[RMDB]
RNA sequence: GGGAACGACUCGAGUAGAGUCGAAAAUGGUAGUCCGCCACUCUAAGGGGACGCCUUUAGAAGAAGAGGCUAGGUGGUAUUCCGGUGUGGGAUACUUGGUAAUAUGGAACGCUAAUUGCAUAAGAUUAAAACUUUGCAUACUUCGGUAUGCAAAGAACAAAGUCAUAACCUUCGGGUUAUGACUUUGAAAAGAAACAACAACAACAAC
Reactivity to DMS in 0.01 (KOAc 150mM, MgCl2 10mM, bicine 150mM(pH8.5), 24C), signal-to-noise 2, nucleotides 027 to 156: u000g020g010u000a060g050u000c030c030g000c000c010a190c130u010c040u030a110a090g000g000g030g000a070c230g000c000c020u000u000u000a040g020a080a160g000a100a060g000a160g020g000c030u010a040g000g030u010g030g010u000a090u000u000c020c010g020g010u010g030u000g030g030g010a030u000a010c060u010u000g000g000u000a080a090u000a100u000g000g010a080a090c040g020c000u010a060a090u010u000g000c040a060u000a040a200g000a240u000u020a040a080a170a110c000u010u000u000g040c000a040u000a010c000u010u000c240g000g010u000a000u000g010c000a000a000a000g030a080a150
Reactivity to 2A3 in 0.01 (KOAc 150mM, MgCl2 10mM, bicine 150mM(pH8.5), 24C), signal-to-noise 3, nucleotides 027 to 156: u080g000g030u030a120g040u040c040c040g100c150c030a070c030u150c080u120a090a110g010g000g010g010a020c020g030c010c000u080u090u080a130g010a210a010g020a040a010g020a020g030g000c050u040a030g000g070u040g000g040u050a050u080u010c020c030g090g070u140g060u130g040g000g000a030u030a070c000u030u050g020g000u020a070a080u030a100u110g040g000a030a010c020g010c030u040a110a070u090u060g000c020a040u050a150a040g030a060u120u150a040a070a030a080c000u000u000u000g010c000a000u000a010c000u030u030c090g020g000u000a000u000g000c000a000a000a000g000a010a010